[RMDB]
RNA sequence: GGGAACGACUCGAGUAGAGUCGAAAAGCGUAAGGCGGCCACAGCAGAAGCUUUCACGUCGCAGCCGCUGUCAGAUUCUGGUGAAUCUGCGAUUUCUGCUGAAAUGAAGGCUGAAGAGACAGCCAAAGAGCAGUCACUAGUUCGCUAGUGACUGCUCAAAAGAAACAACAACAACAAC
Reactivity to 2A3 in 0.01 (KOAc 150mM, MgCl2 10mM, bicine 150mM(pH8.5), 24C), signal-to-noise 3, nucleotides 027 to 126: g050c030g140u190a050a020g020g000c000g010g010c020c030a180c010a050g000c000a000g020a050a000g040c040u060u130u150c110a080c060g080u040c010g050c010a060g030c000c000g000c000u000g050u060c020a000g000a070u040u030c010u270g240g040u300g050a000a040u000c010u000g010c000g000a000u000u020u000c000u000g000c000u040g040a040a080a050u130g030a160a020g000g000c000u000g010a120a010g040a050g000a030c000a000g010c000c000a060a070a010
Reactivity to DMS in 0.01 (KOAc 150mM, MgCl2 10mM, bicine 150mM(pH8.5), 24C), signal-to-noise 1, nucleotides 027 to 126: g060c040g000u000a020a200g000g000c030g000g030c000c190a070c060a080g000c000a000g030a060a200g030c050u000u000u000c230a090c170g020u000c090g000c040a120g000c110c050g000c050u000g000u070c090a020g040a030u000u000c000u050g000g060u000g010a030a010u000c000u000g000c080g040a040u000u000u000c000u000g000c000u000g000a190a060a070u060g000a120a060g000g000c030u090g080a000a110g030a300g000a160c040a010g040c000c000a000a130a160

This 177-nucleotide RNA was probed chemically with 2A3 and DMS. The DMS profile rests on 1,025 reads. The RNA was probed in 150 mM KOAc, 10 mM MgCl2 and 150 mM bicine (pH 8.5) at 24 C. Values are in units of 0.01, from 0 to 300, in steps of 10.